An RNA of 207 nucleotides, treated with 2A3 and read out base by base. Reactivities are given for positions 27 through 156. Conditions: 150 mM KOAc, 10 mM MgCl2 and 150 mM bicine (pH 8.5), 24 C. Source: RMDB library M2RFPK, as collected in RNAgym. As a SHAPE reagent, 2A3 marks flexible, mostly unpaired nucleotides at the ribose 2'-OH. For 2A3 the reverse transcriptase was SuperScript II with manganese.
[RMDB]
RNA sequence: GGGAACGACUCGAGUAGAGUCGAAAAACACCAAAACUGAAAACGGAAGGCAAUCCUUCCACGACGAUACUUACUUUCCUUUGAUCGUCGUUACGACUGGCAUAGCCACAAAGGAGAACAAACAUGAGCGCGGACACUGACUUCGGUCAGUGUCCAACUCCAAGAUCUUCUUCGGAAGAUCUUGGAGAAAAGAAACAACAACAACAAC
Reactivity to 2A3 in 0.01 (KOAc 150mM, MgCl2 10mM, bicine 150mM(pH8.5), 24C), signal-to-noise 1, nucleotides 027 to 156: a000c080a070c020c050a080a080a010a060c150u260g140a060a120a000a000c060g020g000a000a000g060g000c190a030a200u300c000c010u000u000c000c000a000c000g000a000c000g000a000u020a130c040u080u020a020c060u020u050u090c050c000u100u000u040g010a040u040c000g010u030c020g030u130u060a050c110g040a000c040u030g030g000c070a200u090a160g000c000c010a040c010a040a130a040g090g010a080g020a020a000c100a010a160a000c010a190u240g060a070g090c140g000c060g030g000a000c000a000c000u000g000a000c000u000u070c190g070g000u010c020a000g040u000g000u000c000c000a000a000